Notes
Conditions: 150 mM KOAc, 10 mM MgCl2 and 150 mM bicine (pH 8.5), 24 C. This 177-nucleotide RNA was probed chemically with DMS and 2A3. 2A3 adducts were read by reverse transcription with SuperScript II with manganese. DMS adducts were read by reverse transcription with MarathonRT. Reactivities are given for positions 27 through 126. Source: RMDB library OK2TST, as collected in RNAgym.
[RMDB]
RNA sequence: GGGAACGACUCGAGUAGAGUCGAAAAUGCACGCCGCCCUGUUCGGCUGGAUGCUGCCGGCCGUCGUCGCGUUCGCGGAUGCCGUCGAGCGCCUGGCCGACGCGUGGCACGACAGCCGGCCGGUGCGCGACGGAUGGAACUUCGGUUCCAUCCGUCGAAAAGAAACAACAACAACAAC
Reactivity to DMS in 0.01 (KOAc 150mM, MgCl2 10mM, bicine 150mM(pH8.5), 24C), signal-to-noise 5, nucleotides 027 to 126: u010g010c070a080c090g030c110c020g020c040c040c050u000g020u010u000c050g010g000c010u000g010g010a140u000g010c160u010g010c000c000g010g020c060c030g000u000c020g000u000c060g000c020g010u000u010c030g010c020g000g010a160u010g020c090c010g020u010c040g010a070g010c010g010c050c070u020g020g000c060c030g010a040c010g010c080g020u000g000g010c010a030c030g000a050c010a030g010c020c000g000g010c030c030g000g010u000g010c070g020
Reactivity to 2A3 in 0.01 (KOAc 150mM, MgCl2 10mM, bicine 150mM(pH8.5), 24C), signal-to-noise 5, nucleotides 027 to 126: u110g010c030a020c120g060c010c020g000c020c030c030u040g060u190u150c030g000g000c030u040g040g030a150u070g030c110u020g000c000c000g040g010c040c020g010u030c010g030u020c030g010c010g030u060u050c000g010c030g010g080a220u240g160c090c010g100u240c060g000a030g020c030g000c000c080u100g040g000c020c020g010a010c000g000c030g020u150g010g010c010a000c020g030a020c000a000g000c020c000g000g000c000c000g020g010u040g000c050g010